RNA sequence: GGGAACGACUCGAGUAGAGUCGAAAAAAGGUGUACGCGAACAUCACGUCGGCCGAAGAGUUCUCCGGUUCGCUUGAGGCCUUCACCUACCCGAAGGCAUUUGCCGAGUGCGAUGGCUACGCAGAACUGACUGACGGUGUCACCAUCGGUCAGCAGCGCUUCCAAACAUUUUCGAAUGUUUGGAAGCAAAAGAAACAACAACAACAAC
Reactivity to DMS in 0.01 (KOAc 150mM, MgCl2 10mM, bicine 150mM(pH8.5), 24C), signal-to-noise 2, nucleotides 027 to 156: a050a060g030g020u010g010u000a060c000g030c020g010a060a130c000a080u010c040a040c010g010u020c040g020g030c010c070g000a010a080g010a200g030u000u000c000u000c010c020g000g010u010u000c030g040c020u000u040g010a150g030g020c030c010u000u000c030a110c030c040u000a100c100c040c020g000a100a030g000g010c000a140u000u000u000g010c030c000g010a080g020u000g080c000g020a100u000g000g000c010u020a030c020g040c020a110g010a110a050c000u000g000a060c000u000g010a000c000g060g000u010g030u000c180a170c020c010a020u010c010g000g020u000c000a010g010c010a070g000c110
Reactivity to 2A3 in 0.01 (KOAc 150mM, MgCl2 10mM, bicine 150mM(pH8.5), 24C), signal-to-noise 7, nucleotides 027 to 156: a000a000g080g010u070g020u060a060c120g020c030g060a150a030c030a150u220c040a040c070g210u130c030g030g000c020c040g010a080a030g050a030g080u250u110c050u000c050c060g030g020u070u110c080g020c000u020u050g040a040g020g040c000c000u000u000c010a020c000c020u090a120c020c020c010g030a030a020g030g000c060a110u090u090u270g000c000c010g000a040g050u060g020c060g040a050u030g030g020c020u040a040c040g000c030a040g030a140a040c020u030g210a120c010u010g000a020c010g040g000u040g100u180c130a070c140c000a030u030c050g080g060u010c010a010g000c010a020g020c020